[RMDB]
RNA sequence: GGGAACGACUCGAGUAGAGUCGAAAACGUCCUGCUCCUAGUGGGCAUCCUCUGCCUGGGCGCCACCAGCGCCAAGCCGCACGAGGAGAUCAACAGGGACCACGCCGCCGAGCUGGCCAACGAGUGCGCGUAUUAAUGGGUUCGCCCAUUAAUACGCAAAAGAAACAACAACAACAAC
Reactivity to DMS in 0.01 (KOAc 150mM, MgCl2 10mM, bicine 150mM(pH8.5), 24C), signal-to-noise 3, nucleotides 027 to 126: c200g020u010c020c030u000g030c070u000c010c030u020a090g030u040g000g000g000c120a150u000c030c000u000c020u020g000c020c000u010g000g000g010c000g010c000c070a140c270c220a190g000c010g010c030c020a040a050g000c120c160g020c030a040c120g000a040g010g010a000g000a090u020c130a130a080c110a240g000g020g000a100c020c020a080c080g000c010c000g020c040c070g000a050g000c000u000g000g000c020c060a110a150c120g000a090g020u020g020c140
Reactivity to 2A3 in 0.01 (KOAc 150mM, MgCl2 10mM, bicine 150mM(pH8.5), 24C), signal-to-noise 8, nucleotides 027 to 126: c020g080u060c000c000u010g010c010u020c010c000u090a070g050u230g080g000g000c000a040u020c000c010u030c000u020g010c010c000u040g050g010g030c000g040c010c020a210c030c040a020g010c010g000c020c000a010a010g070c080c070g020c010a030c150g010a010g060g020a010g020a070u100c030a030a110c020a090g020g020g040a040c020c010a030c080g050c010c010g100c030c030g030a040g020c030u040g030g000c030c020a060a040c050g060a040g110u120g040c070